Overview
This 177-nucleotide RNA was probed chemically with 2A3. The reactions ran in a buffer of 150 mM KOAc, 10 mM MgCl2 and 150 mM bicine (pH 8.5), at 24 C.
RNA sequence: GGGAACGACUCGAGUAGAGUCGAAAAGCGCUUCUGAAGUUAUAGUAUCCACGAUAUUGAGUCCUGACGAUGCGAUACCACAAACUUAUGUGCAUAAUGUGAGCCCUGUCUCAAUGGAAUAUAAAUCGCUAGGAGGGCGAUUCGUCGCCCUCCUAGCAAAAGAAACAACAACAACAAC
Reactivity to 2A3 in 0.01 (KOAc 150mM, MgCl2 10mM, bicine 150mM(pH8.5), 24C), signal-to-noise 1, nucleotides 027 to 126: g010c000g000c070u050u010c200u270g110a000a000g090u110u000a200u140a110g120u000a000u040c050c000a020c200g110a110u050a000u110u110g000a000g140u030c050c150u090g000a030c020g000a030u170g000c000g000a120u000a180c000c030a000c000a050a090a090c000u000u180a000u160g080u130g080c130a110u060a200a000u030g000u050g110a020g080c000c130c000u020g000u000c000u000c120a000a090u030g030g050a140a000u120a000u140a080a180a090u300c050
Reactivities are given for positions 27 through 126.
For 2A3 the reverse transcriptase was SuperScript II with manganese.